[RMDB]
RNA sequence: GGGAACGACUCGAGUAGAGUCGAAAAGGCGUGCUUUACCAAGUCAUGGUUUAGUGCGAAGCCCUCUUGACAAUGCAGUCCUUUACAGAAAUAUCCAAUGUAUAGGCUGUUAGGCUGACUGAUAUGACAUGUUACUAGUGUUCGCACUAGUAACAUGAAAAGAAACAACAACAACAAC
Reactivity to DMS in 0.01 (KOAc 150mM, MgCl2 10mM, bicine 150mM(pH8.5), 24C), signal-to-noise 8, nucleotides 027 to 126: g010g010c000g030u000g010c000u000u000u000a020c010c000a070a190g020u010c190a100u010g010g000u000u000u000a010g030u010g010c000g010a090a100g000c020c000c020u010c130u010u010g010a130c150a090a120u010g000c010a020g010u010c000c010u000u010u000a010c010a010g000a070a090a100u010a060u010c170c230a070a110u010g000u000a010u010a030g010g010c000u000g010u000u000a060g010g000c060u000g000a070c100u000g000a120u000a060u010g000a250
Reactivity to 2A3 in 0.01 (KOAc 150mM, MgCl2 10mM, bicine 150mM(pH8.5), 24C), signal-to-noise 8, nucleotides 027 to 126: g090g030c010g010u010g000c000u010u020u010a010c000c010a060a060g160u100c060a160u070g000g000u010u010u000a010g000u010g020c010g010a040a030g030c000c030c000u010c050u030u130g030a060c050a080a100u170g010c010a010g040u230c000c010u050u100u030a010c000a010g110a080a180a040u190a090u080c100c060a090a070u140g030u040a030u030a030g110g010c000u010g000u030u020a030g020g000c050u030g030a140c030u040g050a090u070a100u270g060a030